The record gives the reactivity of an RNA of 177 nucleotides to DMS. The data come from the RNA Mapping Database (RMDB), library OK2TRN. The DMS profile rests on 1,102 reads.
[RMDB]
RNA sequence: GGGAACGACUCGAGUAGAGUCGAAAAGCUGAGGGGGAGGAUUGUUUGAGCUCAAAAGUCUGAGACGAGCCUGGGCAACAUGGUGAGAUUUCGUCUCUAUUAAAAAUCAAAGGCCGGGCGCGGUGGCCGAGAAUACUUUCUUCGGAAAGUAUUCUCGAAAAGAAACAACAACAACAAC
Reactivity to DMS in 0.01 (KOAc 150mM, MgCl2 10mM, bicine 150mM(pH8.5), 24C), signal-to-noise 1, nucleotides 027 to 126: g000c080u000g000a060g010g000g020g010g010a050g010g020a050u020u010g010u000u010u010g010a060g010c040u000c050a050a050a130a070g020u010c080u010g010a140g020a040c010g000a060g010c060c030u000g010g010g070c050a050a080c070a080u000g000g000u000g000a110g000a090u000u020u000c070g010u000c000u000c010u000a090u020u010a000a060a080a070a060u010c050a050a080a220g010g010c070c070g020g000g000c040g010c050g010g020u000g000g000c190